[RMDB]
RNA sequence: GGGAACGACUCGAGUAGAGUCGAAAAUCUAACAGAUAAUCAGCCACGAGCGCGGUACUGGUAAUGCCAUCAGCAUCACGAUCGCCGACAAUCAUAAUCUUCUCGGGAUUCACCGCAUAAACACGCCGUCGAUAUGAUACUUCGGUAUCAUAUCGACAAAAGAAACAACAACAACAAC
Reactivity to 2A3 in 0.01 (KOAc 150mM, MgCl2 10mM, bicine 150mM(pH8.5), 24C), signal-to-noise 2, nucleotides 027 to 126: u030c020u010a040a070c000a060g060a080u080a080a070u110c030a010g000c020c000a090c050g070a060g040c090g000c050g080g000u040a040c040u020g030g030u100a160a000u100g080c050c020a100u060c010a030g000c030a020u000c020a010c070g030a030u040c000g100c040c030g050a020c020a060a040u070c020a030u060a190a050u090c010u100u000c030u000c000g000g000g010a050u040u020c030a040c050c000g000c030a070u130a060a180a000c090a010c050g010c000c050
Reactivity to DMS in 0.01 (KOAc 150mM, MgCl2 10mM, bicine 150mM(pH8.5), 24C), signal-to-noise 1, nucleotides 027 to 126: u010c060u010a060a090c140a170g000a200u010a070a140u000c030a060g040c020c080a150c040g000a080g000c040g040c000g030g020u000a050c080u030g000g000u010a060a060u000g030c030c060a100u030c020a050g000c040a050u000c010a130c060g040a080u010c000g020c060c020g010a060c070a080a090u040c030a030u010a060a150u000c080u000u000c060u000c050g000g000g000a110u000u000c130a110c030c000g000c070a030u000a040a050a070c060a100c080g010c100c100

Chemical mapping of a 177-nucleotide RNA with 2A3 and DMS. The DMS profile rests on 765 reads. The 2A3 profile rests on 1,308 reads. DMS adducts were read by reverse transcription with MarathonRT.